Source: RMDB library TTRINS, as collected in RNAgym. Structure probing data (DMS) for a 177-nucleotide construct.

RNA sequence: GGGAACGACUCGAGUAGAGUCGAAAAGAUAUGGACGAGGGUAAUAGUCGCUGGAACGACAUGAAGGAGUAUCGGAAACGAUAUGACUUCAACAGCGUUCAGCGACUAUUACCCUCGUCCUAAGUCACUAAUCAGGUUGGUUCGCCAACCUGAUUAGAAAAGAAACAACAACAACAAC
Reactivity to DMS in 0.01 (KOAc 150mM, MgCl2 10mM, bicine 150mM(pH8.5), 24C), signal-to-noise 1, nucleotides 027 to 126: g000a060u000a300u010g000g060a010c010g010a030g030g000g000u020a010a020u000a020g030u000c000g030c000u000g030g040a000a020c010g020a050c120a300u000g000a020a010g010g010a300g000u000a000u000c000g010g010a150a170a210c000g010a020u000a000u010g000a300c000u000u000c000a000a040c290a100g000c010g000u000u000c010a030g010c000g010a020c000u000a000u000u000a000c000c010c000u000c000g000u010c000c010u000a010a070g000u000c010a300

The reactions ran in a buffer of 150 mM KOAc, 10 mM MgCl2 and 150 mM bicine (pH 8.5), at 24 C. Reactivities are given for positions 27 through 126. High DMS reactivity at an A or C suggests that its Watson-Crick edge is free.